[RMDB]
RNA sequence: GGGAACGACUCGAGUAGAGUCGAAAAGGGAGGAAUAGAAGGGCUAAACCAAUACACGUGGGUGUAUGCCUAUAUCCAUCAAAUGAAGGUUUGCCUCCGUGAUCAGCCGUAUCCGUAUUACAUUUUGUGUAAGGGUGAUGAUCUGAGAGUGGCUGUGGGGAAAGGAAAGGUUCGCCUUUCCUUUCCCAAAAGAAACAACAACAACAAC
Reactivity to DMS in 0.01 (KOAc 150mM, MgCl2 10mM, bicine 150mM(pH8.5), 24C), signal-to-noise 1, nucleotides 027 to 156: g000g020g030a100g000g000a090a090u000a100g000a060a140g010g010g040c070u000a040a040a080c030c020a170a240u000a090c080a060c070g010u000g000g040g030u000g010u010a030u020g020c080c050u000a100u000a020u000c020c040a100u010c070a040a090a070u010g010a120a100g000g010u010u000u000g000c030c000u000c040c030g020u000g000a040u010c010a040g080c050c060g020u000a090u020c000c070g030u030a100u000u020a020c000a110u010u000u000u010g060u000g010u010a030a060g010g000g080u000g000a080u000g000a020u010c070u000g020a140g000a080g020u010g000g010c000u000g000u000g000
Reactivity to 2A3 in 0.01 (KOAc 150mM, MgCl2 10mM, bicine 150mM(pH8.5), 24C), signal-to-noise 2, nucleotides 027 to 156: g110g020g000a060g010g020a010a050u080a060g080a130a120g050g000g000c020u020a010a030a040c000c020a090a140u170a120c050a010c040g100u150g020g080g020u030g000u030a060u170g020c000c020u070a090u010a040u100c020c030a000u030c010a040a070a170u300g050a070a000g020g060u040u030u060g040c030c020u070c010c000g030u020g030a030u100c030a000g010c010c060g020u080a060u060c010c030g020u140a030u090u060a050c100a080u120u130u190u220g090u020g030u060a050a120g020g000g050u060g020a070u060g000a020u020c030u060g010a040g010a030g090u040g040g000c030u000g030u010g070
An RNA of 207 nucleotides, treated with DMS and 2A3 and read out base by base.
Reactivities are rounded to 0.1 and cut off at 0 and 3.